[RMDB]
RNA sequence: GGGAACGACUCGAGUAGAGUCGAAAAUAGUGCGCCUGGCGCUCGAUCAUGAGCGAGCGUACGUACUGACGGCCGGCCCAGCGCGGUACAGCGGCCGAUCACGGCCGGCCACGGCCGUACGAUCACACGUUCUGAUUUCUUUCGAGAAAUCAGAACGAAAAGAAACAACAACAACAAC
Reactivity to 2A3 in 0.01 (KOAc 150mM, MgCl2 10mM, bicine 150mM(pH8.5), 24C), signal-to-noise 1, nucleotides 027 to 126: u090a000g010u010g010c020g030c000c030u060g180g010c040g000c010u010c000g150a250u140c070a140u280g120a030g060c010g000a020g000c010g010u010a030c010g010u020a060c030u020g100a070c060g030g010c000c000g010g000c010c000c000a070g130c040g030c130g090g000u090a060c060a080g060c090g040g010c020c010g000a070u110c020a030c030g000g000c000c000g020g000c050c030a040c010g040g000c010c000g000u020a040c030g030a050u070c010a020c010a000
Reactivity to DMS in 0.01 (KOAc 150mM, MgCl2 10mM, bicine 150mM(pH8.5), 24C), signal-to-noise 2, nucleotides 027 to 126: u040a100g020u000g000c040g010c140c100u010g020g020c060g000c000u000c040g000a150u010c160a120u010g010a050g000c020g000a080g000c030g020u000a040c000g000u000a080c020u000g010a170c070g070g020c010c000g030g000c000c000c040a230g000c120g030c050g000g020u010a050c100a130g030c080g010g010c030c010g000a030u010c090a140c110g000g040c000c040g010g000c060c050a030c000g000g020c300c000g000u010a030c060g000a120u000c090a100c140a170
Chemical mapping of a 177-nucleotide RNA with 2A3 and DMS. DMS adducts were read by reverse transcription with MarathonRT. Conditions: 150 mM KOAc, 10 mM MgCl2 and 150 mM bicine (pH 8.5), 24 C. Values cover nucleotides 27 to 126. It was measured as part of the RMDB library OK2TRN. 2A3 adducts were read by reverse transcription with SuperScript II with manganese.